[RMDB]
RNA sequence: GGGAACGACUCGAGUAGAGUCGAAAAGGGCCAGUGUGGCCACCAGCGGCAUCCCUUCCGGCACUGCGGCCACUGUGACUGCGAUACCGCUGGCCACCGCUUGGCGUAGGCCCCGCCGGCGCAACAGCGGUUGAUGCGUGUUCGCACGCAUCAACCGAAAAGAAACAACAACAACAAC
Reactivity to 2A3 in 0.01 (KOAc 150mM, MgCl2 10mM, bicine 150mM(pH8.5), 24C), signal-to-noise 4, nucleotides 027 to 126: g070g020g000c040c040a060g140u100g030u070g210g010c000c000a010c000c000a010g020c010g040g000c040a070u070c050c000c010u060u040c050c030g000g010c060a020c130u170g040c100g100g000c030c030a070c080u080g070u140g080a090c040u060g020c060g040a010u020a070c000c000g000c000u020g010g000c010c000a070c010c010g020c000u110u300g000g000c030g050u060a070g020g020c020c000c000c000g000c010c000g000g000c020g000c030a070a140c020a070g060
Reactivity to DMS in 0.01 (KOAc 150mM, MgCl2 10mM, bicine 150mM(pH8.5), 24C), signal-to-noise 2, nucleotides 027 to 126: g000g000g040c040c050a120g020u070g030u010g000g000c030c020a100c070c030a140g070c030g040g000c200a010u000c000c010c040u020u000c070c080g000g000c250a030c070u050g030c090g030g010c000c010a160c050u000g000u030g000a080c020u000g020c100g000a030u000a070c030c000g010c010u000g010g000c140c010a090c130c010g000c030u000u020g030g000c010g010u020a070g000g020c000c000c100c010g000c010c030g000g000c070g000c220a180a020c050a120g050
The data come from the RNA Mapping Database (RMDB), library OK1LIB. The record gives the reactivity of an RNA of 177 nucleotides to 2A3 and DMS. The RNA was probed in 150 mM KOAc, 10 mM MgCl2 and 150 mM bicine (pH 8.5) at 24 C. For 2A3, 2,963 sequencing reads were counted. DMS adducts were read by reverse transcription with MarathonRT. 2A3 adducts were read by reverse transcription with SuperScript II with manganese.